[RMDB]
The record gives the reactivity of an RNA of 177 nucleotides to DMS.
The reactions ran in a buffer of 150 mM KOAc, 10 mM MgCl2 and 150 mM bicine (pH 8.5), at 24 C.
For DMS, 672 sequencing reads were counted.
For DMS the reverse transcriptase was MarathonRT.
The data come from the RNA Mapping Database (RMDB), library M2PK90.
RNA sequence: GGGAACGACUCGAGUAGAGUCGAAAAAAAAAUAACUAGCAUGCAUAAGACGAGGUAGAGCGCGCGCUCUACCAAAAGAUGUGUGUAAAAGCGCACGUGUAGGCGCGCAUACACGAAUAAACAAAAAUCCCAAAUAUAGGUUCGCCUAUAUUUGGGAAAAAGAAACAACAACAACAAC
Reactivity to DMS in 0.01 (KOAc 150mM, MgCl2 10mM, bicine 150mM(pH8.5), 24C), signal-to-noise 1, nucleotides 027 to 126: a040a220a130a130a050u000a030a080c080u010a160g000c020a070u020g040c010a050u010a140a060g000a060c260g000a150g000g040u010a000g000a000g010c140g070c300g000c210g020c000u000c000u000a000c000c000a000a020a050a100g000a000u000g000u010g060u010g000u000a040a050a080a070g000c040g010c070a010c070g010u000g000u010a040g010g020c000g000c070g000c040a100u010a000c010a010c090g000a140a080u020a030a010a040c040a000a030a060a040a110